[RMDB]
This 177-nucleotide RNA was probed chemically with 2A3. 2A3 adducts were read by reverse transcription with SuperScript II with manganese. It was measured as part of the RMDB library OK1LIB.
RNA sequence: GGGAACGACUCGAGUAGAGUCGAAAAGUCCACGAGCGCACGUAGAUCACUGCGAUCCUGGGGUCGCCGAUCAUCAUCUCUCGCAAGAAGUUUCAUCGCGAUCAGAUGCGCCGUUGUGGCCACCGGAGCUGGUCUGUCACUUCGGUGACAGACCAGCAAAAGAAACAACAACAACAAC
Reactivity to 2A3 in 0.01 (KOAc 150mM, MgCl2 10mM, bicine 150mM(pH8.5), 24C), signal-to-noise 2, nucleotides 027 to 126: g010u000c020c000a010c050g060a010g000c040g010c000a000c060g110u190a100g010a030u040c020a010c160u110g000c000g010a040u030c010c000u110g160g000g000g000u010c020g030c080c090g000a000u000c000a040u020c000a080u000c020u060c000u040c000g080c050a050a060g040a060a050g080u080u190u080c090a140u030c130g010c030g010a020u040c000a020g030a160u050g010c040g000c000c000g010u020u060g060u140g030g000c000c050a110c000c050g050g000a060